[RMDB]
RNA sequence: GGGAACGACUCGAGUAGAGUCGAAAAGAUAUGGAUGGUACUUCUGACUCUCCGAGGAUCGUAGCGUAACAUCCAUCGGAAACGAUGGUGGCUACGGGAGGAGGGUCAGAAGUACCAUCCUAAGUCACAAUCGAGAAUUGUUCGCAAUUCUCGAUUGAAAAGAAACAACAACAACAAC
Reactivity to DMS in 0.01 (KOAc 150mM, MgCl2 10mM, bicine 150mM(pH8.5), 24C), signal-to-noise 2, nucleotides 027 to 126: g000a060u000a300u000g000g010a000u000g000g030u010a010c000u000u000c000u000g010a010c000u000c020u000c000c000g000a100g020g010a030u000c010g000u000a000g010c010g040u010a030a020c250a030u000c000c000a000u000c010g010g000a130a060a270c020g000a010u010g010g020u000g010g000c000u000a000c030g000g010g000a030g030g020a010g000g010g000u000c000a000g000a000a010g020u000a000c000c000a000u000c000c000u000a000a060g000u000c030a240
Conditions: 150 mM KOAc, 10 mM MgCl2 and 150 mM bicine (pH 8.5), 24 C. Structure probing data (DMS) for a 177-nucleotide construct. In probing experiments dimethyl sulfate is read out at A N1 and C N3, which are open when not base-paired. Values are in units of 0.01, from 0 to 300, in steps of 10.